[RMDB]
RNA sequence: GGGAACGACUCGAGUAGAGUCGAAAACAUGGCCCAGGUGCAAUUCAGCAUGUGGGUAACCGGGAAGGACGCCUGGUAUUUCGCGAAUUAUGACCCUCGCAUGAAGCGAGAAGGCAUUCACCAUGUGGUUGUAGAGCGCGACGACAAAUACAUGUCCUGGGGAAGGUUAAUUCGUUAACCUUCCCCAAAAAGAAACAACAACAACAAC
Reactivity to 2A3 in 0.01 (KOAc 150mM, MgCl2 10mM, bicine 150mM(pH8.5), 24C), signal-to-noise 2, nucleotides 027 to 156: c020a070u050g070g000c010c000c010a020g000g070u000g010c010a110a300u050u230c020a110g010c000a000u120g030u000g270g010g000u030a060a000c010c000g030g010g010a050a010g030g000a030c030g110c030c000u000g000g000u020a080u090u150u040c020g000c000g010a020a030u060u000a010u040g020a050c000c000c000u020c000g090c070a090u130g200a170a040g000c000g040a020g050a060a130g120g000c050a020u150u080c030a030c120c010a050u080g010u060g050g000u000u000g000u020a020g000a020g090c000g030c000g020a000c020g000a020c090a060a080a010u150a040c100a050u090g010u000c030c000
Reactivity to DMS in 0.01 (KOAc 150mM, MgCl2 10mM, bicine 150mM(pH8.5), 24C), signal-to-noise 1, nucleotides 027 to 156: c030a110u000g000g000c020c020c020a060g000g060u000g010c000a130a140u000u010c250a260g020c030a000u000g010u000g040g010g020u010a020a130c000c010g000g010g000a120a070g020g000a070c060g030c000c020u000g000g000u000a090u010u000u000c000g010c040g000a120a070u000u000a040u010g000a120c000c000c010u010c040g040c020a120u010g010a130a300g000c030g040a080g030a050a050g010g060c020a130u000u000c130a060c080c060a140u000g030u000g000g080u000u030g080u000a010g010a060g010c020g010c000g040a120c100g000a100c070a010a030a100u000a060c120a120u000g000u000c000c070
The record gives the reactivity of an RNA of 207 nucleotides to 2A3 and DMS. The 2A3 profile rests on 867 reads.